[RMDB]
RNA sequence: GGGAACGACUCGAGUAGAGUCGAAAAGAUAUGGAAAUCUUACAGGCUUUUGACGCCUCCCUCGGAAACGAGAUGAGGCGAUAAGCCUGGGGAUUUCCUAAGUCAAACAGCAUCUUCGGAUGCUGAACCUGUAUCCGAAGUUCGCUUCGGAUACAGGAAAAGAAACAACAACAACAAC
Reactivity to 2A3 in 0.01 (KOAc 150mM, MgCl2 10mM, bicine 150mM(pH8.5), 24C), signal-to-noise 2, nucleotides 027 to 126: g000a040u080a020u190g000g020a020a000a020u000c010u100u150a300c100a000g000g040c000u150u260u300u240g250a150c030g000c000c000u000c030c000c000u000c000g000g060a150a080a040c020g030a000g040a080u120g030a000g020g000c000g050a020u010a020a010g010c030c000u000g000g000g000g000a000u000u000u000c000c000u000a060a010g000u000c040a050a060a110c000a000g030c000a000u000c010u120u090c300g100g010a000u030g040c000u010g000a010a040
Reactivity to DMS in 0.01 (KOAc 150mM, MgCl2 10mM, bicine 150mM(pH8.5), 24C), signal-to-noise 1, nucleotides 027 to 126: g020a050u010a300u010g010g030a010a000a010u000c010u000u010a160c020a020g000g010c000u000u010u000u000g060a190c080g010c010c000u000c000c180c010u000c000g010g010a070a110a110c000g000a040g020a080u010g000a050g000g020c000g000a030u000a010a010g010c000c000u000g000g000g000g000a020u010u010u000c000c000u010a000a080g030u010c010a110a110a240c020a000g000c000a000u000c000u010u000c260g010g000a010u000g020c000u010g010a090a150
Conditions: 150 mM KOAc, 10 mM MgCl2 and 150 mM bicine (pH 8.5), 24 C. The record gives the reactivity of an RNA of 177 nucleotides to 2A3 and DMS. For DMS the reverse transcriptase was MarathonRT. 2A3 adducts were read by reverse transcription with SuperScript II with manganese. DMS (dimethyl sulfate) methylates the pairing face of unpaired adenines and cytosines.